Structure probing data (DMS and 2A3) for a 177-nucleotide construct. The reactions ran in a buffer of 150 mM KOAc, 10 mM MgCl2 and 150 mM bicine (pH 8.5), at 24 C. In probing experiments dimethyl sulfate is read out at A N1 and C N3, which are open when not base-paired. It was measured as part of the RMDB library OK1LIB.

[RMDB]
RNA sequence: GGGAACGACUCGAGUAGAGUCGAAAACUAUUUAUAGACAGAACAGUGGAAAACGUAUAUCGCUAUAAACCUUACACGCCGAUUCUUCCAGUCGUACUAUUCCACAUAGGCGAGGCAUAAGCGAAAGCAGUAGUCACCCUUUCGAGGGUGACUACUGAAAAGAAACAACAACAACAAC
Reactivity to DMS in 0.01 (KOAc 150mM, MgCl2 10mM, bicine 150mM(pH8.5), 24C), signal-to-noise 2, nucleotides 027 to 126: c050u010a010u000u000u000a030u040a100g000a070c100a160g000a100a060c130a050g000u010g000g040a070a040a090a000c030g030u100a150u040a200u000c060g000c050u000a040u010a020a040a140c050c010u000u000a110c180a140c070g010c040c000g000a080u000u000c020u000u000c050c040a120g000u030c030g000u000a040c040u000a040u040u000c040c000a000c020a120u030a120g100g000c060g020a100g060g000c030a130u040a070a030g000c000g000a000a070a080g020
Reactivity to 2A3 in 0.01 (KOAc 150mM, MgCl2 10mM, bicine 150mM(pH8.5), 24C), signal-to-noise 2, nucleotides 027 to 126: c020u030a090u020u130u000a150u090a160g180a030c050a060g060a190a050c020a020g040u110g150g000a080a040a040a000c050g030u030a110u000a000u270c010g020c070u060a010u030a070a050a060c000c000u010u010a030c040a000c130g050c000c030g040a090u070u000c020u050u000c050c000a000g020u020c020g000u050a130c000u050a090u020u000c000c030a000c030a200u040a030g080g000c000g020a020g050g000c010a030u030a110a040g030c010g070a100a030a000g030